[RMDB]
This 177-nucleotide RNA was probed chemically with 2A3 and DMS. It was measured as part of the RMDB library TTRDES. For 2A3, 2,069 sequencing reads were counted. Conditions: 150 mM KOAc, 10 mM MgCl2 and 150 mM bicine (pH 8.5), 24 C. High 2A3 reactivity points to a flexible backbone, as in loops and unpaired stretches.
RNA sequence: GGGAACGACUCGAGUAGAGUCGAAAAGAUAUGGACAGUGAGGAUGAACUACUUUCGAUGGUCGGAAACGACCAAUGAAAGCAUCUACCCACCACUGUCCUAAGUCAAAAGGGCGCUUCGGCGCCCAUCGGUAGAUACGGUUCGCCGUAUCUACCGAAAAAGAAACAACAACAACAAC
Reactivity to 2A3 in 0.01 (KOAc 150mM, MgCl2 10mM, bicine 150mM(pH8.5), 24C), signal-to-noise 1, nucleotides 027 to 126: g040a030u210a090u170g000g000a010c000a000g000u040g030a040g050g000a010u060g000a060a140c110u200a060c000u300u010u000c010g150a120u080g030g000u020c020g000g060a110a010a030c040g010a000c000c060a010a070u120g000a000a010a030g000c000a040u000c010u080a170c040c000c060a070c030c060a000c010u000g000u010c010c000u000a040a030g050u030c000a000a030a070a200g000g010g000c010g000c020u030u100c300g160g040c000g010c000c000c000a000
Reactivity to DMS in 0.01 (KOAc 150mM, MgCl2 10mM, bicine 150mM(pH8.5), 24C), signal-to-noise 2, nucleotides 027 to 126: g000a030u000a300u010g000g000a030c010a020g000u010g000a300g030g010a090u000g000a110a050c140u010a150c000u000u000u000c000g000a180u000g030g040u000c030g000g040a090a180a300c000g000a000c000c000a010a060u020g020a030a000a010g020c060a060u010c080u000a220c080c040c040a280c140c010a000c010u030g070u010c000c020u000a020a110g000u030c010a100a120a110a130g010g000g000c000g040c000u000u010c270g000g000c000g000c030c000c000a000